[RMDB]
RNA sequence: GGGAACGACUCGAGUAGAGUCGAAAAGAAGUCAUUUGGUAAGGCUAUAUCAGGUGGCUCUACAGGUACUAUGUCGCAUCAUGGUGCUUGUGAACUCGUAGCUUGAUGCGACAAGUUAUGAGUGAUCUAUUUUACUAUAGCCUUAGUGAGAUAGAGACUAUCAGGGCAUCUUCGGAUGCCCUGAUAGAAAAGAAACAACAACAACAAC
Reactivity to 2A3 in 0.01 (KOAc 150mM, MgCl2 10mM, bicine 150mM(pH8.5), 24C), signal-to-noise 1, nucleotides 027 to 156: g020a030a000g010u060c020a040u000u000u070g060g010u010a000a040g000g020c020u030a020u000a000u120c020a020g000g020u000g020g050c000u000c020u100a050c050a100g140g100u060a050c010u060a100u140g030u000c000g000c000a000u050c000a010u060g190g010u020g060c040u150u090g160u130g160a120a090c000u010c040g050u000a020g060c010u000u000g000a000u000g010c000g010a000c000a000a000g000u000u060a170u160g060a080g020u100g100a040u010c000u000a020u000u000u020u100a030c000u000a000u010a000g010c040c000u020u000a000g020u000g040a020g000a010u020a020g040a000g020a030